Source: RMDB library OK1LIB, as collected in RNAgym. Chemical mapping of a 177-nucleotide RNA with 2A3.
RNA sequence: GGGAACGACUCGAGUAGAGUCGAAAAACAACGCAAUGUCUCCUUUAUUAUUUGAAGCAUGAAAGCUCAUGGAUCAUAGCCAUGUGACAGAACGCCUUGAUUACGUUAGACUGAUAGGACCGCUGUGAGUGGGAUGUGCUUUCGAGCACAUCCCACUAAAAGAAACAACAACAACAAC
Reactivity to 2A3 in 0.01 (KOAc 150mM, MgCl2 10mM, bicine 150mM(pH8.5), 24C), signal-to-noise 2, nucleotides 027 to 126: a000c130a020a000c070g010c080a000a000u110g000u000c040u000c000c000u120u070u150a030u020u000a110u000u200u010g070a200a000g040c190a110u090g120a220a090a000g000c000u000c010a000u010g090g030a090u130c160a260u300a070g000c060c020a050u060g000u000g160a130c080a070g090a000a030c020g000c000c060u000u140g000a000u120u160a000c000g000u000u080a120g010a110c060u080g000a030u140a000g060g030a000c030c010g000c020u030g020u140g040